[RMDB]
RNA sequence: GGGAACGACUCGAGUAGAGUCGAAAAGAAAGAAAGAAAGUUGAUUGUUUAUCGGAAACUUUAAACUAUAACCAUUCAAACUUUUCCAGAAGUUAGUUUGAAUAGAAAUUAAAAAGAAACUUCUGAAUAACCUUAUCAUGCUUCGGCAUGAUAAGAACUUAUUGAUCGUGUUCGCACGAUCAAUAAGAAAAGAAACAACAACAACAAC
Reactivity to 2A3 in 0.01 (KOAc 150mM, MgCl2 10mM, bicine 150mM(pH8.5), 24C), signal-to-noise 1, nucleotides 027 to 156: g110a010a030a010g040a010a100a000g070a110a110a010g030u040u030g020a190u110u120g040u040u140u060a080u090c060g030g000a030a000a060c000u080u060u080a100a080a000c020u080a020u060a300a010c040c030a000u010u000c000a010a000a000c000u000u010u040u010c090c000a000g000a010a000g000u000u030a000g000u020u000u000g010a010a000u080a160g000a000a110a020u120u200a080a090a000a000a000g000a000a000a000c010u000u000c000u000g000a010a050u040a050a010c000c010u000u010a000u000c010a000u010g000c020u020u050c180g050g000c000a000u000g000a010u000a000a000g000a000a010